This 207-nucleotide RNA was probed chemically with 2A3 and DMS.
DMS adducts were read by reverse transcription with MarathonRT.
Conditions: 150 mM KOAc, 10 mM MgCl2 and 150 mM bicine (pH 8.5), 24 C.
Reactivities are given for positions 27 through 156.
It was measured as part of the RMDB library OK3TST.
For 2A3 the reverse transcriptase was SuperScript II with manganese.
RNA sequence: GGGAACGACUCGAGUAGAGUCGAAAACAAGGGUGGAAGUCACUUACCCAGGACCAAAGGAUUGGGUAGCUCUCAGCCAAGGGUGAUAGGGAGCAUAUAGAAAUGUGCAGUUGUCACAAUAACUAGAGGCCAUAGUUGGCGUUUAUGGGCAGUGCCAGACUAUUAAAUGCUUCGGCAUUUAAUAGUCAAAAGAAACAACAACAACAAC
Reactivity to 2A3 in 0.01 (KOAc 150mM, MgCl2 10mM, bicine 150mM(pH8.5), 24C), signal-to-noise 3, nucleotides 027 to 156: c060a060a040g050g040g010u080g020g050a090a070g080u110c020a040c070u020u080a080c000c010c020a010g020g040a060c030c040a100a120a020g080g010a080u050u070g030g000g000u020a050g000c000u000c010u010c070a030g040c010c020a050a040g070g000g010u050g010a080u100a070g020g050g010a040g050c060a020u070a000u010a120g120a050a110a030u080g020u020g000c090a080g020u080u050g020u100c010a010c000a070a050u100a090a010c050u060a050g020a050g120g040c020c010a010u040a050g090u060u080g020g000c010g020u000u040u040a110u060g000g000g000c030a030g020u010g010c020c000a010
Reactivity to DMS in 0.01 (KOAc 150mM, MgCl2 10mM, bicine 150mM(pH8.5), 24C), signal-to-noise 3, nucleotides 027 to 156: c050a090a100g000g040g040u000g020g010a130a050g020u000c060a050c060u000u000a090c010c020c030a110g000g000a220c040c070a070a110a160g010g000a200u010u000g010g040g040u000a110g000c070u010c040u000c050a130g020c050c070a100a110g010g010g000u000g020a090u000a110g010g020g010a120g030c000a100u020a080u010a190g020a070a150a090u040g020u000g020c040a130g010u010u010g020u000c010a110c080a060a100u000a060a080c060u010a080g020a110g020g030c000c030a060u000a070g020u000u000g010g010c080g010u000u010u020a050u000g030g010g000c010a130g020u000g010c020c010a130